Notes: Chemical mapping of a 207-nucleotide RNA with 2A3. It was measured as part of the RMDB library OK3TST. The RNA was probed in 150 mM KOAc, 10 mM MgCl2 and 150 mM bicine (pH 8.5) at 24 C. The 2A3 profile rests on 556 reads. 2A3 adducts were read by reverse transcription with SuperScript II with manganese.
[RMDB]
RNA sequence: GGGAACGACUCGAGUAGAGUCGAAAAUAACCUUCCACUGAGUCUUCAAGGACAAGGAGUUACUCAGGGAAAGAUGAGGGUGACUGAGACUAAGGAAACAGCAUGUAGAAAGUGCUGGAGGCCUGAGAAAGCCUUGCCCAUUUCAGGAUCUACAAGAGGAUAUCGCAUACUUCGGUAUGCGAUAUCCAAAAGAAACAACAACAACAAC
Reactivity to 2A3 in 0.01 (KOAc 150mM, MgCl2 10mM, bicine 150mM(pH8.5), 24C), signal-to-noise 1, nucleotides 027 to 156: u120a020a080c010c000u030u050c010c040a160c030u000g010a010g070u000c050u040u060c120a180a260g270g060a300c080a060a060g050g000a010g030u060u160a000c000u000c000a000g000g040g000a000a000a050g030a020u050g040a060g030g020g000u060g000a050c000u010g030a040g000a060c010u020a040a140g000g000a000a180a000c000a000g000c000a000u140g000u000a060g060a130a120a040g020u030g000c000u000g000g010a010g020g010c030c000u040g000a060g040a060a050a000g000c000c000u000u080g010c010c000c000a010u030u030u020c010a010g030g030a060u000c010u110a130c070a120a130g080a070